[RMDB]
RNA sequence: GGGAACGACUCGAGUAGAGUCGAAAAGGUCGGUGUUUCGACACCGACCACUUACCGAGAAUGUUCCUCGGUAAAUAAAACAAACCCUUGGAAACAAGGGAAUACGAAUCGUGUUCGCACGAUUCAAUACCGGAUGAAAGUUCGCUUUCAUCCGGUAAAAAGAAACAACAACAACAAC
Reactivity to 2A3 in 0.01 (KOAc 150mM, MgCl2 10mM, bicine 150mM(pH8.5), 24C), signal-to-noise 1, nucleotides 027 to 126: g000g000u020c000g020g020u040g000u000u080u160c210g030a010c010a000c000c000g010a000c000c000a000c000u000u020a000c000c000g010a000g070a050a210u290g010u180u110c000c000u000c000g030g010u000a010a030a000u060a050a040a030a050c070a010a060a110c000c000c000u000u000g010g000a070a030a030c000a020a000g000g000g020a000a000u090a020c050g010a000a000u020c010g000u010g040u040u020c180g060c100a000c010g000a000u010u000c000a000a000
Reactivity to DMS in 0.01 (KOAc 150mM, MgCl2 10mM, bicine 150mM(pH8.5), 24C), signal-to-noise 1, nucleotides 027 to 126: g010g000u010c000g020g020u000g000u000u000u020c200g040a020c020a010c000c000g000a020c000c000a040c050u010u000a000c000c000g020a020g000a170a190u010g000u000u000c110c000u000c010g000g010u000a000a020a120u000a070a020a170a040c130a100a160a110c000c000c000u000u000g000g000a190a150a270c000a000a000g000g010g000a070a040u010a100c100g010a000a000u000c000g010u000g020u000u000c220g020c000a000c000g000a000u000u000c000a050a110